[RMDB]
RNA sequence: GGGAACGACUCGAGUAGAGUCGAAAAGGAAACGGUGUAUUAGAGACGGAACUAUGACAUUAGACAGUUGGGCUCAAACAACUUUUUCAGCAAGAUACUCAACUGUUCUGGAAAAGUUAAGAGGCAAACCUCCGAGUAUAUUCGUAUACUCGGAGGUAAAAGAAACAACAACAACAAC
Reactivity to DMS in 0.01 (KOAc 150mM, MgCl2 10mM, bicine 150mM(pH8.5), 24C), signal-to-noise 3, nucleotides 027 to 126: g010g010a050a040a120c110g010g010u000g000u000a060u000u010a060g030a110g010a060c050g000g000a030a050c090u000a040u000g000a080c080a070u020u030a080g010a090c030a060g020u000u000g020g000g020c280u010c050a060a080a080c200a040a050c050u000u000u000u010u000c070a010g000c250a080a060g000a070u010a080c140u000c140a050a080c090u020g000u010u000c030u000g000g000a020a040a020a020g010u010u000a070a100g010a070g000g010c090a060a130
Reactivity to 2A3 in 0.01 (KOAc 150mM, MgCl2 10mM, bicine 150mM(pH8.5), 24C), signal-to-noise 1, nucleotides 027 to 126: g090g000a070a090a020c030g040g030u030g010u020a090u090u070a010g030a000g020a070c010g050g030a060a010c030u020a040u190g030a000c030a060u110u050a030g050a050c030a020g020u050u020g070g030g000c020u020c000a090a080a050c060a010a020c010u050u010u060u030u060c010a010g010c010a040a030g010a100u120a160c030u020c070a000a060c040u080g060u130u000c010u000g000g000a010a030a020a000g010u000u010a080a000g040a050g090g000c050a090a020